[RMDB]
RNA sequence: GGGAACGACUCGAGUAGAGUCGAAAAACUGACGGUACGCCGUCAGAGCGGUAGAAAAGAUGGUUUGAAAACCACGCCUUCUACCAAUAUAGUAAAUAAAUAGGCGGAGCGGUCAUACGUGACCGCAAAAACAUAUUCAGCUUCGGCUGAAUAUGAACACCAAUGACGUGUUCGCACGUCAUUGGUGAAAAGAAACAACAACAACAAC
Reactivity to 2A3 in 0.01 (KOAc 150mM, MgCl2 10mM, bicine 150mM(pH8.5), 24C), signal-to-noise 2, nucleotides 027 to 156: a060c000u000g000a000c000g000g000u070a040c090g010c020c000g000u000c000a010g000a000g000c050g000g000u010a000g000a010a010a010a020g110a280u030g000g030u070u080u240g130a120a090a000a000c000c000a000c000g000c010c000u000u000c000u000a000c000c010a020a000u110a000u030a040g110u050a000a060a160u130a030a060a030u080a040g000g000c000g010g000a000g030c000g000g000u000c000a020u010a060c210g090u010g000a010c000c000g010c000a020a000a000a000a000c000a000u000a000u000u000c010a000g010c000u010u090c100g150g000c010u020g000a000a000u000a000u010g020a000a000